[RMDB]
RNA sequence: GGGAACGACUCGAGUAGAGUCGAAAACACAAGCCAGAGUCUUCCAUUGGGAAGCGAAGACCCCGUAGAGUUUUACUGCAGUCUGUCGUUGAAGCUUGGUUAUAGGUAUGCAGUGUAAGUGGGAGAAUGCAUACUAGAUUUUCGAAUCUAGUAUGCAAAAAGAAACAACAACAACAAC
Reactivity to DMS in 0.01 (KOAc 150mM, MgCl2 10mM, bicine 150mM(pH8.5), 24C), signal-to-noise 9, nucleotides 027 to 126: c060a110c110a070a080g010c040c060a110g000a160g000u020c000u000u000c010c020a220u020u020g020g010g010a070a050g010c060g000a110a090g000a090c030c040c030c070g010u020a080g010a140g010u010u010u010u010a060c020u000g010c020a040g010u000c040u000g010u010c070g010u010u010g000a080a110g000c060u010u000g010g010u000u010a100u020a040g010g020u000a080u010g010c030a030g010u000g000u010a050a070g010u000g000g010g010a100g000a060a170
Reactivity to 2A3 in 0.01 (KOAc 150mM, MgCl2 10mM, bicine 150mM(pH8.5), 24C), signal-to-noise 6, nucleotides 027 to 126: c040a000c010a000a030g050c000c030a020g020a030g140u050c000u020u000c000c020a110u070u190g160g010g020a060a010g030c020g030a020a010g030a040c000c000c010c010g010u090a060g020a040g120u030u050u060u170a030c010u000g010c010a030g000u030c010u040g110u060c030g050u060u100g090a080a020g050c030u070u070g030g010u080u070a080u070a080g050g040u090a120u160g010c010a000g040u010g040u180a190a040g050u090g030g030g010a060g050a100a040